RNA sequence: GGGAACGACUCGAGUAGAGUCGAAAAGGCAGGUUCUGCAGGACGCGGCCGAGCGUGCCGGCAUCACCGCCGGUGUUUCGCCGCAUAUGUUGAGGCAUUCGUUCGCCACGCAUCUGCUGGAGGGUGGUGUUCCGAACCAAUUCGUUGGUUCGGAACAAAAAGAAACAACAACAACAAC
Reactivity to 2A3 in 0.01 (KOAc 150mM, MgCl2 10mM, bicine 150mM(pH8.5), 24C), signal-to-noise 1, nucleotides 027 to 126: g070g020c040a010g070g000u090u000c000u060g000c000a000g000g040a060c050g000c030g010g120c160c030g010a000g010c050g030u060g020c010c020g000g000c000a030u210c060a040c090c100g040c000c000g000g000u050g020u000u050u050c070g010c000c030g050c020a000u080a080u150g150u100u160g080a050g060g000c020a030u080u110c020g020u020u050c050g040c020c030a030c020g030c060a080u000c020u040g000c040u050g030g010a040g010g060g000u140g010g050
Reactivity to DMS in 0.01 (KOAc 150mM, MgCl2 10mM, bicine 150mM(pH8.5), 24C), signal-to-noise 2, nucleotides 027 to 126: g000g000c040a040g000g000u000u010c060u000g000c020a040g010g010a090c090g000c010g010g010c080c070g010a050g010c050g040u020g030c010c000g010g000c030a040u020c180a130c300c170g000c000c010g020g010u000g000u000u000u000c270g020c010c010g020c000a030u000a010u010g030u000u020g020a100g040g030c010a100u000u010c120g030u000u000c050g030c030c110a080c050g000c110a050u000c030u000g000c020u010g020g010a080g010g020g010u000g010g000

Background: The data come from the RNA Mapping Database (RMDB), library OK2TST. This 177-nucleotide RNA was probed chemically with 2A3 and DMS. For DMS the reverse transcriptase was MarathonRT. The RNA was probed in 150 mM KOAc, 10 mM MgCl2 and 150 mM bicine (pH 8.5) at 24 C. The DMS profile rests on 1,830 reads. High DMS reactivity at an A or C suggests that its Watson-Crick edge is free.